Chemical mapping of a 207-nucleotide RNA with 2A3.
RNA sequence: GGGAACGACUCGAGUAGAGUCGAAAAACUUGUAUAGGCGAUUAAUAAAUCUUCUGUAAAUGCUGUAAGAGGAUUACCCCUUGACGUUUCAGCACUAGGCUGCUCUAGCGAUUAAUCAAUGCAUUUGUAACGGAAAGACAGUUCGCUGUCUUUCCAACUCAACACCAUACUUCGGUAUGGUGUUGAGAAAAGAAACAACAACAACAAC
Reactivity to 2A3 in 0.01 (KOAc 150mM, MgCl2 10mM, bicine 150mM(pH8.5), 24C), signal-to-noise 1, nucleotides 027 to 156: a000c100u100u040g160u100a080u050a080g000g040c000g030a010u080u240a160a130u140a190a200a070u040c030u070u020c040u060g100u140a040a080a200u130g010c030u030g060u040a110a000g010a000g040g000a060u060u070a130c030c000c000c000u000u110g050a030c000g060u000u090u050c110a010g000c000a000c040u000a000g100g050c060u000g000c000u010c050u060a010g030c010g040a040u030u110a080a010u060c090a070a070u180g010c050a080u080u020u110g180u080a130a030c080g020g020a000a000a000g000a000c000a010g000u060u140c160g030c080u000g000u030c000u000u000u000c000c000a000a000
For 2A3 the reverse transcriptase was SuperScript II with manganese.
It was measured as part of the RMDB library M2RFPK.
Values cover nucleotides 27 to 156.
The 2A3 profile rests on 360 reads.
The RNA was probed in 150 mM KOAc, 10 mM MgCl2 and 150 mM bicine (pH 8.5) at 24 C.